This 177-nucleotide RNA was probed chemically with DMS and 2A3. The 2A3 profile rests on 12,547 reads. Reactivities are given for positions 27 through 126. Conditions: 150 mM KOAc, 10 mM MgCl2 and 150 mM bicine (pH 8.5), 24 C.
[RMDB]
RNA sequence: GGGAACGACUCGAGUAGAGUCGAAAACUAUGAACAUACCAGGAAAGAGAGUCGAGACAUUAGGCCAAAGCCCACAAUGUACAUAUAAAGCGGAACUGGACCUGGGCAUUCCUGCCGCUUUAGGCAAAUCCACAUUAGAUUUCGAUCUAAUGUGGAUAAAAGAAACAACAACAACAAC
Reactivity to DMS in 0.01 (KOAc 150mM, MgCl2 10mM, bicine 150mM(pH8.5), 24C), signal-to-noise 9, nucleotides 027 to 126: c050u000a070u010g010a120a080c130a100u000a090c050c040a060g010g000a080a080a090g010a100g010a060g010u000c050g010a150g000a060c050a050u010u000a070g010g010c020c060a060a090a130g010c020c010c030a070c160a060a060u000g010u010a060c120a080u010a100u000a020a020a030g010c000g000g000a050a110c110u000g010g010a030c070c030u000g000g000g020c120a140u010u000c010c000u000g000c000c000g000c050u000u000u000a030g010g000c160a050a090
Reactivity to 2A3 in 0.01 (KOAc 150mM, MgCl2 10mM, bicine 150mM(pH8.5), 24C), signal-to-noise 6, nucleotides 027 to 126: c020u030a090u230g060a060a020c040a040u090a080c030c020a030g050g080a070a100a020g130a010g010a010g040u070c040g020a010g020a080c030a070u080u090a030g040g000c030c040a080a060a020g030c010c030c000a050c030a040a060u110g050u110a070c030a040u250a010u020a170a040a000g000c010g020g030a130a190c100u030g010g010a000c010c010u010g000g040g000c020a040u070u000c000c010u000g020c010c010g020c000u030u020u010a040g000g000c020a110a090